RNA sequence: GGGAACGACUCGAGUAGAGUCGAAAAGCCAGAUCAGGUCGAAGAACUCCUCCGCUGACAGGACCUCACCGUAGGGAAUCGUCAGUUCGCGGUUGCGGAUCUCGCGCACUUCGGGGGCCUCGGUGGCAGACGUAAGCGAAUUCGUUCGCUUACGUCUAAAAGAAACAACAACAACAAC
Reactivity to 2A3 in 0.01 (KOAc 150mM, MgCl2 10mM, bicine 150mM(pH8.5), 24C), signal-to-noise 5, nucleotides 027 to 126: g010c050c020a010g020a100u080c050a020g060g030u080c020g070a110a020g020a110a050c050u050c030c010u010c000c020g010c010u000g010a030c020a050g070g060a090c010c000u070c020a250c090c060g090u270a030g030g000g010a050a100u080c020g040u030c060a000g020u060u050c040g000c030g000g080u040u180g060c020g030g050a070u020c060u030c050g080c000g000c020a030c060u060u060c010g010g030g010g020g020c000c000u010c020g050g000u030g020g000c020
Reactivity to DMS in 0.01 (KOAc 150mM, MgCl2 10mM, bicine 150mM(pH8.5), 24C), signal-to-noise 2, nucleotides 027 to 126: g020c000c000a050g000a060u020c120a080g010g000u010c020g000a140a000g000a130a170c100u000c010c000u000c100c020g010c000u000g000a030c000a040g000g000a300c020c000u000c080a100c110c060g020u080a080g010g010g020a120a150u040c100g000u000c050a050g000u000u000c080g000c070g000g000u010u010g000c020g010g000a080u010c080u000c030g030c020g010c080a120c050u000u000c030g000g040g040g010g000c020c020u020c030g010g010u000g020g000c110